RNA sequence: GGGAACGACUCGAGUAGAGUCGAAAAUUAGAACGCAGGGAACCAGUGGAGCCAUGGGAUGCUCAUCCCGAUGCUCGAUUCCAUUCCCUCCCCCCAAGGGUCGCCCAGGAAUGGCGGGACCCCACUCCGCUAUUUUGUAGUUCGCUACAAAAUAGCGAAAAGAAACAACAACAACAAC
Reactivity to DMS in 0.01 (KOAc 150mM, MgCl2 10mM, bicine 150mM(pH8.5), 24C), signal-to-noise 1, nucleotides 027 to 126: u030u000a150g000a070a090c180g040c130a040g010g020g000a010a030c130c200a120g030u010g040g000a010g020c050c260a190u030g000g020g020a040u030g020c270u000c180a120u020c000c000c000g000a170u010g020c020u020c020g010a100u020u020c050c080a250u000u020c000c000c000u000c000c000c000c000c000c030a030a040g000g000g010u000c040g000c020c000c000a090g040g040a100a050u000g020g020c150g020g040g020a000c000c000c000c240a010c120u000c020